[RMDB]
RNA sequence: GGGAACGACUCGAGUAGAGUCGAAAAAUAGACUAGCUGUUUGCCACCGUGGCCAGUUUUGAAAGAAAAUAGAGAGUCAUUAUGUCAUCUGGUGCAAGAUAACAAGGGCAAAUGCUAUGACGCCAGACUAACUCAUGAUGUUCGCAUCAUGAGUUAGAAAAGAAACAACAACAACAAC
Reactivity to DMS in 0.01 (KOAc 150mM, MgCl2 10mM, bicine 150mM(pH8.5), 24C), signal-to-noise 6, nucleotides 027 to 126: a090u010a100g000a180c090u000a030g020c010u010g020u000u000u000g010c010c020a140c190c170g010u000g000g010c010c010a110g020u000u000u010u000g010a090a090a110g000a060a010a040a070u010a100g010a090g000a120g020u000c030a040u010u020a110u000g010u010c040a040u000c020u000g000g020u010g010c130a090a040g010a050u000a030a050c090a080a130g010g010g020c010a020a020a020u000g000c010u000a020u010g010a140c150g010c030c010a100g010a220
Reactivity to 2A3 in 0.01 (KOAc 150mM, MgCl2 10mM, bicine 150mM(pH8.5), 24C), signal-to-noise 4, nucleotides 027 to 126: a000u130a020g080a040c040u010a000g020c050u050g050u070u040u050g020c010c010a080c050c060g100u060g050g000c010c010a030g000u020u070u090u090g150a110a090a040g130a030a180a020a010u170a030g150a000g000a010g080u000c050a080u050u180a090u180g060u030c010a050u010c040u020g050g040u140g090c040a070a010g020a110u100a090a030c050a070a090g030g000g000c010a040a020a020u050g000c010u060a060u150g020a040c030g010c030c010a030g010a050
Overview
Conditions: 150 mM KOAc, 10 mM MgCl2 and 150 mM bicine (pH 8.5), 24 C. An RNA of 177 nucleotides, treated with DMS and 2A3 and read out base by base. For 2A3 the reverse transcriptase was SuperScript II with manganese.